[RMDB]
RNA sequence: GGGAACGACUCGAGUAGAGUCGAAAAUAAUAUGCAUAUCGAGUUCCCAUGUAUUUUCGAAGCCCUGCGGCUGUAACAUUACAGCUUAGUAAGAAUGCUACCUAACGAUAGCUAGCCGCAGGAUUAAGGUUAGUUAAUGGUUCGCCAUUAACUAACCAAAAGAAACAACAACAACAAC
Reactivity to 2A3 in 0.01 (KOAc 150mM, MgCl2 10mM, bicine 150mM(pH8.5), 24C), signal-to-noise 3, nucleotides 027 to 126: u060a010a040u160a060u130g020c040a010u090a060u190c050g080a020g080u010u010c040c010c030a000u070g000u010a100u010u110u020u060c030g040a050a000g030c000c000c000u000g000c010g010g030c000u010g050u070a050a040c040a130u000u100a000c030a030g100c120u050u030a040g000u000a020a020g040a080a040u110g000c010u020a020c020c010u050a130a080c070g090a150u040a020g000c010u000a000g040c010c000g000c000a000g000g010a000u000u010a010a000
Reactivity to DMS in 0.01 (KOAc 150mM, MgCl2 10mM, bicine 150mM(pH8.5), 24C), signal-to-noise 4, nucleotides 027 to 126: u010a070a120u010a100u000g020c070a090u010a080u010c080g010a140g000u000u000c000c000c000a120u020g000u000a030u000u000u000u000c040g010a090a130g000c120c010c000u000g020c000g020g020c000u000g000u010a070a100c150a120u000u010a040c030a130g030c220u010u000a080g010u000a010a020g010a080a100u010g000c010u010a000c030c020u010a120a130c220g010a030u000a000g010c000u010a030g010c000c020g000c000a030g020g010a030u000u000a050a100